[RMDB]
RNA sequence: GGGAACGACUCGAGUAGAGUCGAAAAUCUUUGAUCUCCUGAAGGAGGAAGGAGCUCUCGAGCGCUCUCCCGCCCCUCGGAUGGGCCGCUUCCGGCGAACGAGCCCGAAGAGCGAGUGGGGGAGAACUCCCGAGAGUUGGGAGACAGAAAGAGGGCGGCAUGUAGACCAGUUCGCUGGUCUACAUGCAAAAGAAACAACAACAACAAC
Reactivity to 2A3 in 0.01 (KOAc 150mM, MgCl2 10mM, bicine 150mM(pH8.5), 24C), signal-to-noise 2, nucleotides 027 to 156: u040c010u050u030u120g060a080u030c010u010c010c030u100g110a070a070g060g040a000g000g020a070a000g020g030a060g000c000u010c000u000c020g000a000g030c090g010c020u000c000u000c000c000c000g000c000c020c000c000u010c010g030g020a080u150g050g000g000c000c020g010c000u090u070c080c060g130g050c080g060a060a050c050g000a040g000c000c000c000g010a030a010g000a000g030c120g010a010g020u010g000g000g000g000g000a000g010a000a010c020u070c000c030c010g040a050g010a010g040u140u120g020g000g000a000g010a000c020a030g130a040a040a000g010a030g000g020g020c080g030